[RMDB]
The record gives the reactivity of an RNA of 177 nucleotides to 2A3 and DMS. For DMS, 4,098 sequencing reads were counted. For DMS the reverse transcriptase was MarathonRT. The RNA was probed in 150 mM KOAc, 10 mM MgCl2 and 150 mM bicine (pH 8.5) at 24 C. High 2A3 reactivity points to a flexible backbone, as in loops and unpaired stretches.

RNA sequence: GGGAACGACUCGAGUAGAGUCGAAAAAGGGCUGUGCACGUUAGCACUGGGGAGUGUGUUUGUGAGUGUGGCGCAGUCGGAGGUAUUCUACGGGGGCUACGCAAGCAAGUUGAAGACAGUGAAGGUCCCACUAAAUCCCGUUCGCGGGAUUUAGUGGAAAAGAAACAACAACAACAAC
Reactivity to 2A3 in 0.01 (KOAc 150mM, MgCl2 10mM, bicine 150mM(pH8.5), 24C), signal-to-noise 3, nucleotides 027 to 126: a000g060g000g000c030u040g040u070g010c010a040c200g060u130u150a040g030c010a030c070u050g000g000g110g030a100g020u100g010u030g030u030u110u120g120u080g060a090g030u060g010u050g080g000c080g020c060a000g030u010c030g000g020a010g050g030u100a130u170u090c030u050a010c010g010g000g010g000g020c010u020a020c020g030c040a010a030g020c020a090a040g000u050u060g070a050a010g040a030c050a040g020u030g120a060a000g040g010u010c000
Reactivity to DMS in 0.01 (KOAc 150mM, MgCl2 10mM, bicine 150mM(pH8.5), 24C), signal-to-noise 2, nucleotides 027 to 126: a040g000g020g020c020u000g000u000g040c030a120c110g010u000u030a090g030c020a020c040u000g010g000g010g000a080g040u000g000u020g000u000u000u010g000u020g000a180g030u020g010u010g060g000c010g020c000a050g020u010c060g000g010a080g020g000u020a070u040u010c090u020a050c160g000g000g000g000g000c000u010a000c050g000c050a010a130g000c040a070a120g010u040u000g010a050a090g000a010c110a040g000u010g000a040a140g000g000u010c050